[RMDB]
RNA sequence: GGGAACGACUCGAGUAGAGUCGAAAACCGUAGGACAUACCCAGGCUUGGACCCACAGCUACCCACCACUCCUUCGAAAGAGGGAGUGAGGCUGUGGCUAGCCUGGGAUGUCCUAAACGGAAACCAGCUAAUGACUCUUCGGAGUCAUUAGCUGGAAGAUCACACUCUGGUUCGCCAGAGUGUGAUCAAAAGAAACAACAACAACAAC
Reactivity to 2A3 in 0.01 (KOAc 150mM, MgCl2 10mM, bicine 150mM(pH8.5), 24C), signal-to-noise 2, nucleotides 027 to 156: c000c010g000u020a010g020g000a000c000a000u140a300c010c000c000a000g000g000c010u190u270g100g120a130c040c000c000a000c000a000g000c010u090a110c010c060c080a070c040c000a000c000u000c000c000u000u000c010g120a170a120a080g000a000g000g000g030a020g000u000g000a000g000g040c000u000g000u000g030g030c000u000a000g000c000c010u000g000g010g000a000u000g000u000c000c000u000a000a010a000c000g030g030a110a040a020c010c010a000g000c000u000a000a010u000g000a000c000u000c040u110u070c290g160g000a010g000u000c000a000u000u000a000g020c000u000g010g000a000a000